[RMDB]
Conditions: 150 mM KOAc, 10 mM MgCl2 and 150 mM bicine (pH 8.5), 24 C. Structure probing data (DMS and 2A3) for a 207-nucleotide construct. For 2A3 the reverse transcriptase was SuperScript II with manganese.
RNA sequence: GGGAACGACUCGAGUAGAGUCGAAAAGGCCACUGACCAAGAGAGUUCACAAUAACAAAUGUAAGGGGAGUUGUAUGUCUGUAGUUUUGUGUGUAUUCCUUCAGUCAACAGAUAGCUUUGGAGGACUUGUGUGUGUCAGGCAUUUUGCUAUCCACUGACUAUCUGCGUAAUUCGUUACGCAGAUAGUAAAAGAAACAACAACAACAAC
Reactivity to DMS in 0.01 (KOAc 150mM, MgCl2 10mM, bicine 150mM(pH8.5), 24C), signal-to-noise 4, nucleotides 027 to 156: g020g040c010c020a090c060u010g020a080c020c010a080a100g010a120g010a070g010u000u000c040a070c050a060a110u000a110a160c060a090a090a090u010g000u000a100a080g020g030g040g010a150g040u000u000g010u000a090u000g010u000c030u010g030u000a090g010u000u000u000u000g010u000g040u000g010u010a130u000u000c030c000u000u000c050a070g010u010c020a050a130c060a150g010a110u000a090g030c060u000u000u010g020g010a120g010g020a050c080u000u010g020u000g020u000g000u010g010u000c040a040g020g000c040a130u000u010u000u010g020c030u000a090u010c000c010a070c050u000g010
Reactivity to 2A3 in 0.01 (KOAc 150mM, MgCl2 10mM, bicine 150mM(pH8.5), 24C), signal-to-noise 5, nucleotides 027 to 156: g040g020c020c020a040c060u030g040a050c010c030a090a050g080a010g000a010g090u140u160c100a030c010a090a120u190a210a030c070a060a160a070u170g050u160a070a080g000g010g010g010a050g020u070u020g070u120a160u070g040u000c040u020g040u030a060g030u050u040u120u070g030u020g020u000g030u010a090u020u080c010c000u030u040c030a030g050u060c030a040a040c010a090g080a080u100a010g010c020u080u040u100g030g020a040g000g000a010c010u050u030g040u010g010u000g000u000g030u060c020a020g020g000c000a010u050u070u040u090g000c010u010a030u040c030c030a040c030u030g010